Source: RMDB library OK1LIB, as collected in RNAgym. Structure probing data (2A3 and DMS) for a 177-nucleotide construct. For DMS the reverse transcriptase was MarathonRT. The reactions ran in a buffer of 150 mM KOAc, 10 mM MgCl2 and 150 mM bicine (pH 8.5), at 24 C. Values cover nucleotides 27 to 126. For DMS, 2,492 sequencing reads were counted.

RNA sequence: GGGAACGACUCGAGUAGAGUCGAAAACAAAACUGACCACCUAUGAGGUCAUACAUCGUCAUAGCAAAACAAAACAAAACUGACCAGAUAUGAGGUCAUACAUCGUCAUAACAAACAAAACAACAAAAUGCGUAGGAUAUUUCGAUAUCCUACGCAUAAAAGAAACAACAACAACAAC
Reactivity to 2A3 in 0.01 (KOAc 150mM, MgCl2 10mM, bicine 150mM(pH8.5), 24C), signal-to-noise 5, nucleotides 027 to 126: c010a000a050a000a050c040u020g010a020c000c000a050c000c010u060a020u080g050a040g000g000u000c020a010u120a080c040a100u080c040g110u030c000a040u040a030g100c120a010a050a060a100c030a040a130a040a020c040a010a140a040a080c030u060g020a000c000c020a020g050a140u130a050u220g130a070g030g000u010c000a000u050a030c030a060u070c040g100u070c030a070u070a180a010c020a130a070a030c080a050a110a050a000c080a040a030c030a040a120a030
Reactivity to DMS in 0.01 (KOAc 150mM, MgCl2 10mM, bicine 150mM(pH8.5), 24C), signal-to-noise 3, nucleotides 027 to 126: c030a030a060a150a140c270u000g000a000c010c000a150c110c080u020a120u000g010a100g000g000u050c000a070u100a110c080a050u020c120g000u000c000a060u000a080g010c300a100a010a070a050c290a060a020a130a030c160a020a020a040a150c130u000g010a050c020c000a100g000a010u000a060u000g000a060g010g000u010c020a020u050a030c150a060u040c070g000u000c050a030u020a020a020c220a100a070a000c270a070a020a040a020c100a060a080c250a080a010a040